[RMDB]
RNA sequence: GGGAACGACUCGAGUAGAGUCGAAAAGAUAUGGAUCGAAGCCGUUUACACUAAGAGCGAUAAGAUGCCCUCGGAAACGAGGGUCAUCUUUUGACGCUUAUGUGUAAACGGCUUCGAUCCUAAGUCACUAGAAGGAUCAGUUCGCUGAUCCUUCUAGAAAAGAAACAACAACAACAAC
Reactivity to DMS in 0.01 (KOAc 150mM, MgCl2 10mM, bicine 150mM(pH8.5), 24C), signal-to-noise 2, nucleotides 027 to 126: g040a030u000a300u010g000g000a020u010c010g030a010a040g000c000c000g010u000u000u000a000c000a010c000u000a100a160g000a040g020c020g030a170u000a010a010g020a010u000g000c030c000c000u000c000g010g000a120a060a230c030g020a010g010g010g020u000c000a000u000c010u010u000u010u000g010a200c100g020c000u000u000a270u020g010u000g010u000a000a000a000c000g000g000c010u000u000c000g000a000u000c000c000u000a010a070g010u010c050a290